[RMDB]
This 177-nucleotide RNA was probed chemically with 2A3 and DMS. The reactions ran in a buffer of 150 mM KOAc, 10 mM MgCl2 and 150 mM bicine (pH 8.5), at 24 C. The data come from the RNA Mapping Database (RMDB), library M2PK50. The 2A3 profile rests on 11,522 reads.
RNA sequence: GGGAACGACUCGAGUAGAGUCGAAAAUGCUGAGCUUUCGAGCUCAGCAGAGGCAAGCAAGCAGCGCAACGUGACAAGACGAGCAUAAGAUCGAGCAUGCUACAAUACGGCACUUCGGUGCCGUAAACCAUGUUCACAAUUUCGAUUGUGAACAUGGAAAAGAAACAACAACAACAAC
Reactivity to 2A3 in 0.01 (KOAc 150mM, MgCl2 10mM, bicine 150mM(pH8.5), 24C), signal-to-noise 5, nucleotides 027 to 126: u030g000c000u010g010a000g000c010u040u080u210c220g080a020g000c000u000c000a000g000c000a000g010a010g010g030c040a010a050g010c000a050a000g010c020a020g010c020g000c050a050a100c060g030u040g050a070c030a060a040g070a060c040g030a020g010c010a030u060a160a060g040a100u090c030g020a020g040c030a010u040g020c010u050a070c020a020a070u030a060c000g000g000c020a010c010u050u060c190g040g000u000g000c000c010g000u000a000a000a000
Reactivity to DMS in 0.01 (KOAc 150mM, MgCl2 10mM, bicine 150mM(pH8.5), 24C), signal-to-noise 6, nucleotides 027 to 126: u000g000c000u010g000a010g020c000u000u000u000c190g020a040g020c000u000c000a010g020c000a010g010a080g010g000c050a080a100g020c070a080a070g000c040a050g020c080g010c030a040a050c090g010u010g000a070c120a080a080g000a070c090g010a100g000c020a050u000a060a070g000a100u010c080g010a110g010c050a040u000g000c080u000a090c130a070a140u000a010c000g010g010c000a010c000u000u010c170g020g000u000g010c000c010g000u000a000a060a160